Chemical mapping of a 177-nucleotide RNA with DMS and 2A3. Source: RMDB library OK2TST, as collected in RNAgym.

RNA sequence: GGGAACGACUCGAGUAGAGUCGAAAAGGUGCAGGGGCGAGGACGAAAGAAGCAGAAGGUGGAGAUGUGGUCAAGGAAGUGGCACUGCUAGGUGAGGGCUGCCUGUCACCCACUGUCCCCCAGUGGGCUUAGCAUGUAACUUCGGUUACAUGCUAAGAAAAGAAACAACAACAACAAC
Reactivity to DMS in 0.01 (KOAc 150mM, MgCl2 10mM, bicine 150mM(pH8.5), 24C), signal-to-noise 7, nucleotides 027 to 126: g020g000u000g020c080a080g020g010g010g010c070g010a100g020g000a070c080g000a070a110a100g010a100a090g010c060a070g000a070a060g000g030u000g010g000a080g020a100u000g010u000g010g010u000c090a070a080g010g010a070a070g000u000g010g010c050a070c070u000g010c080u000a060g010g010u000g010a110g010g010g000c050u000g000c040c040u000g010u000c110a180c010c000c000a010c010u000g000u010c020c010c020c180c010a050g000u000g000g000g000
Reactivity to 2A3 in 0.01 (KOAc 150mM, MgCl2 10mM, bicine 150mM(pH8.5), 24C), signal-to-noise 4, nucleotides 027 to 126: g080g000u080g020c030a020g000g000g030g050c040g040a040g020g040a030c040g070a070a060a100g050a040a020g000c050a020g030a110a020g080g030u080g020g040a100g010a040u100g040u070g040g010u040c030a040a040g040g020a080a060g060u070g020g000c020a010c080u050g000c040u060a040g050g030u060g060a070g010g050g000c010u020g020c020c000u050g040u060c040a090c000c010c000a010c010u010g070u120c020c000c010c000c000a000g000u010g010g000g000
The 2A3 profile rests on 9,016 reads. The reactions ran in a buffer of 150 mM KOAc, 10 mM MgCl2 and 150 mM bicine (pH 8.5), at 24 C.